[RMDB]
RNA sequence: GGGAACGACUCGAGUAGAGUCGAAAAACAAUAGGUCUUUCCACAGCCAACUCAUUUUACAUGAUGCAUUAUCAAUUCUUCUUAAUGAGUAUCAAUGCACACCGUACCUUUAUCUUUCAAACAUUUUUCAAAGGUUUCCAAUUGUCUUUGAAAAAGACCUAUCAGUACCCUUCGGGGUACUGAUAGGAAAAGAAACAACAACAACAAC
Reactivity to 2A3 in 0.01 (KOAc 150mM, MgCl2 10mM, bicine 150mM(pH8.5), 24C), signal-to-noise 3, nucleotides 027 to 156: a010c100a050a100u110a130g000g040u000c000u050u080u020c030c030a060c070a040g020c040c000a050a040c030u040c090a070u040u070u150u180a100c070a070u120g010a050u030g050c020a040u030u070a040u170c030a060a090u120u050c030u110u040c020u050u210a070a050u140g020a020g000u040a010u150c060a020a030u080g000c000a020c010a020c090c050g050u100a070c010c010u090u190u090a120u100c010u030u140u070c010a050a050a080c010a140u140u170u000u000u000c020a020a010a000g040g000u080u190u060c050c070a080a110u180u070g000u020c010u020u010u000g000a000a000a000a000a000g030a000

An RNA of 207 nucleotides, treated with 2A3 and read out base by base.
It was measured as part of the RMDB library OK3TST.
The RNA was probed in 150 mM KOAc, 10 mM MgCl2 and 150 mM bicine (pH 8.5) at 24 C.
The 2A3 profile rests on 1,233 reads.
2A3 adducts were read by reverse transcription with SuperScript II with manganese.